Chemical mapping of a 177-nucleotide RNA with 2A3 and DMS. The DMS profile rests on 4,208 reads. It was measured as part of the RMDB library M2PK90. Reactivities are rounded to 0.1 and cut off at 0 and 3. For 2A3, 2,811 sequencing reads were counted.
RNA sequence: GGGAACGACUCGAGUAGAGUCGAAAAAAUAUGCUCGACAGGCUGCCUGUCCGACAGAGCUUUUAGAUCUUCUGAUCUUUCCCUGCAGCAUAUCGCUUAUGCAUCUAGCGAUUGUCGGAUCACACAAUAUCAUCCCAAGUUUCGACUUGGGAUGAUAAAAAGAAACAACAACAACAAC
Reactivity to 2A3 in 0.01 (KOAc 150mM, MgCl2 10mM, bicine 150mM(pH8.5), 24C), signal-to-noise 2, nucleotides 027 to 126: a000a000u250a060u100g020c000u020c010g060a070c080a060g110g010c040u040g070c020c050u080g090u040c000c000g010a010c000a020g000a000g010c000u000u050u020u000a010g000a010u000c010u230u020c180u300g010a010u010c000u000u010u000c010c000c010u010g010c000a030g000c010a010u020a020u170c020g010c050u070u010a060u210g140c060a080u090c060u070a010g020c000g030a010u020u010g020u000c010g000g020a030u080c050a050c010a010c010a170a150
Reactivity to DMS in 0.01 (KOAc 150mM, MgCl2 10mM, bicine 150mM(pH8.5), 24C), signal-to-noise 5, nucleotides 027 to 126: a060a060u010a070u010g020c020u000c030g020a140c110a090g000g000c060u000g010c040c150u010g000u000c000c000g010a020c020a080g000a050g000c070u000u000u010u000a020g000a020u000c010u000u020c300u020g000a010u000c000u000u000u000c000c010c000u020g000c050a050g000c020a070u000a050u000c020g030c020u000u000a090u000g010c180a120u010c170u000a030g010c010g000a030u000u010g010u010c030g000g010a120u010c160a100c150a100c170a080a090